The data come from the RNA Mapping Database (RMDB), library RNAMAK. Structure probing data (2A3) for a 207-nucleotide construct.

RNA sequence: GGGAACGACUCGAGUAGAGUCGAAAAUCAGUAUCUUCGGAUACUGAAAAAAAGCGUACUACACUUGAGAGAUAUGAACUACAGCAAUCCCAAAUAGGAUUGCUGCAUAAUCUCAAUGAUGGUGUAUCGCAAAAAGCACUGGAUUCGUCCAGUGCAAACCUCGGAAGAGGUUCGCCUCUUCCGAGGUAAAAGAAACAACAACAACAAC
Reactivity to 2A3 in 0.01 (KOAc 150mM, MgCl2 10mM, bicine 150mM(pH8.5), 24C), signal-to-noise 2, nucleotides 027 to 156: u010c000a000g000u000a000u010c000u030u120c230g050g000a000u010a020c020u040g070a010a000a000a000a000a000a000g050c030g000u020a050c020u010a000c000a000c020u000u010g040a020g000a000g060a070u050a010u140g060a110a080c140u180a110c300a000g000c000a000a000u000c000c000c030a270a270a160u240a070g000g000a000u000u000g000c010u010g000c000a000u000a030a220u000c000u000c000a050a140u180g020a140u050g000g000u010g010u010a060u220c100g060c090a000a170a000a000a000g020c040a000c000u050g020g000a020u050u050c160g080u000c060c000a010g030u030g000c000a000a000